[RMDB]
RNA sequence: GGGAACGACUCGAGUAGAGUCGAAAAACAUGGCAGAGACAUACGGCGGAAAACGCUAGAGAUACCGUCUGCCUUGUAGUCGGUGUACACGAGGUGCAAGCGUGUCAUUACGUAAUGUCGUACGCUGAGAUAAAUAGUUAUUCGUAACUAUUUAUCUAAAAGAAACAACAACAACAAC
Reactivity to 2A3 in 0.01 (KOAc 150mM, MgCl2 10mM, bicine 150mM(pH8.5), 24C), signal-to-noise 2, nucleotides 027 to 126: a000c030a050u050g000g000c020a000g000a000g020a040c010a030u120a030c050g000g000c030g050g000a160a220a060a030c000g000c000u220a140g020a010g020a250u210a170c100c050g160u020c020u020g020c000c000u030u050g050u020a120g040u020c160g030g110u100g060u130a020c030a010c050g080a060g000g180u300g000c190a160a080g020c030g010u020g040u080c040a050u060u220a030c020g030u070a060a050u050g020u040c010g020u010a010c020g010c010u010g020